An RNA of 207 nucleotides, treated with DMS and 2A3 and read out base by base. The RNA was probed in 150 mM KOAc, 10 mM MgCl2 and 150 mM bicine (pH 8.5) at 24 C.
RNA sequence: GGGAACGACUCGAGUAGAGUCGAAAAUCCUAAGUCUUGCUUGGAUUUAGUGAUCGAACAUGUAGGGAGGCUUAUCGGAAACGAUAAGCCUUUGAUCUACAUGGGAGAUCACUUGUCAGCAAGAUAUGGAAAACGGGGAAAGUUCGCUUUCCCCGAAACUAAAUCCUAGGUUCGCCUAGGAUUUAGUAAAAGAAACAACAACAACAAC
Reactivity to DMS in 0.01 (KOAc 150mM, MgCl2 10mM, bicine 150mM(pH8.5), 24C), signal-to-noise 2, nucleotides 027 to 156: u000c000c010u010a090a210g000u000c000u000u000g040c010u000u000g030g010a050u000u000u000a000g080u010g010a010u000c000g030a300a300c020a010u000g000u000a000g000g010g020a010g020g030c000u000u000a000u010c000g000g040a120a090a300c010g040a010u000a010a010g010c000c010u000u010u000g000a040u010c000u000a020c010a000u000g020g010g000a300g000a020u000c010a000c010u000u010g010u010c010a060g000c000a000a020g040a010u020a180u020g000g010a030a080a120a180c040g020g010g030g010a050a010a040g020u000u000c210g010c010u000u000u000c000c010c000c000g000a000a020
Reactivity to 2A3 in 0.01 (KOAc 150mM, MgCl2 10mM, bicine 150mM(pH8.5), 24C), signal-to-noise 3, nucleotides 027 to 156: u030c000c000u020a130a030g000u000c000u000u010g000c020u070u170g260g010a080u300u230u150a010g000u010g000a000u000c010g000a010a010c010a010u010g000u010a000g010g010g000a010g000g000c000u000u000a000u000c000g030g020a090a030a070c010g000a000u010a000a000g050c010c020u010u020u020g000a010u000c000u000a000c010a000u000g020g000g000a020g000a000u000c000a000c000u000u000g010u000c000a000g000c000a000a000g000a010u040a050u020g040g010a060a100a040a090c020g010g000g000g000a010a000a010g010u090u160c230g040c130u000u000u000c000c000c010c000g000a000a000
Background:
For DMS the reverse transcriptase was MarathonRT. It was measured as part of the RMDB library RNAMAK.